RNA sequence: GGGAACGACUCGAGUAGAGUCGAAAAGGGACGCGGUGAAGCGCAUGUCCCACGAAUCCGUGUUCCAACAGAGUGAAGCGCUCUACACGGCAUAUUUUUCGCCCAACGGCGAAUGAGCGAGCGCCGACCCCAUCACCGUAUUCGUACGGUGAUGGGGAAAAGAAACAACAACAACAAC
Reactivity to DMS in 0.01 (KOAc 150mM, MgCl2 10mM, bicine 150mM(pH8.5), 24C), signal-to-noise 2, nucleotides 027 to 126: g020g000g000a000c010g010c000g000g020u000g000a250a200g030c000g020c030a100u000g020u030c010c020c000a100c120g070a080a030u000c000c000g040u000g000u000u000c010c030a190a150c180a100g000a060g000u000g000a180a100g020c000g030c000u000c000u000a070c110a110c020g000g000c120a080u000a050u000u000u000u000u000c010g000c000c010c180a070a120c240g020g020c000g000a000a000u000g000a100g080c090g000a060g010c030g030c000c000g000a240
Reactivity to 2A3 in 0.01 (KOAc 150mM, MgCl2 10mM, bicine 150mM(pH8.5), 24C), signal-to-noise 2, nucleotides 027 to 126: g040g010g000a020c020g010c040g010g000u120g070a250a050g130c020g000c070a050u130g070u040c000c050c020a010c010g090a040a040u040c010c010g010u000g000u030u020c030c000a040a000c040a090g230a000g060u060g090a140a030g020c000g030c000u040c000u040a040c090a000c090g070g030c080a030u100a150u190u140u020u020u020c010g000c000c040c070a260a060c070g010g010c000g010a020a000u050g030a030g020c060g000a030g000c030g000c000c020g090a070
Chemical mapping of a 177-nucleotide RNA with DMS and 2A3. The data come from the RNA Mapping Database (RMDB), library OK2TST. Conditions: 150 mM KOAc, 10 mM MgCl2 and 150 mM bicine (pH 8.5), 24 C. For DMS the reverse transcriptase was MarathonRT.